Structure probing data (DMS) for a 207-nucleotide construct. For DMS the reverse transcriptase was MarathonRT.
RNA sequence: GGGAACGACUCGAGUAGAGUCGAAAAGGGGUCUCGUCGAUGAAAUAGCCUUAACUAAUUUGUCUGGCAACGCGAGGAUCUGUGCUGAAGCCUCCACGGCACAGGGAGCGUGCCAGACAAAUUAGUUAAGGCUAUGGAGACGAGACGGAGGCACCCACUUGUUAUAAUAGUUCGCUAUUAUAACAAGAAAAGAAACAACAACAACAAC
Reactivity to DMS in 0.01 (KOAc 150mM, MgCl2 10mM, bicine 150mM(pH8.5), 24C), signal-to-noise 2, nucleotides 027 to 156: g030g040g010g020u000c000u000c000g030u000c000g020a170u010g010a210a150a050u000a020g030c010c000u010u010a000a010c000u000a000a010u000u000u000g010u020c010u000g000g000c000a070a060c020g040c000g000a110g010g020a030u010c010u010g020u010g020c010u010g020a070a170g000c060c020u000c030c050a300c050g000g000c010a020c010a020g010g000g000a070g040c020g030u000g000c010c010a000g000a010c000a020a000a000u000u000a000g010u000u010a010a010g000g010c000u000a000u000g000g000a230g010a010c030g000a000g000a010c020g000g010a080g020g010c080a300c010c000c010a300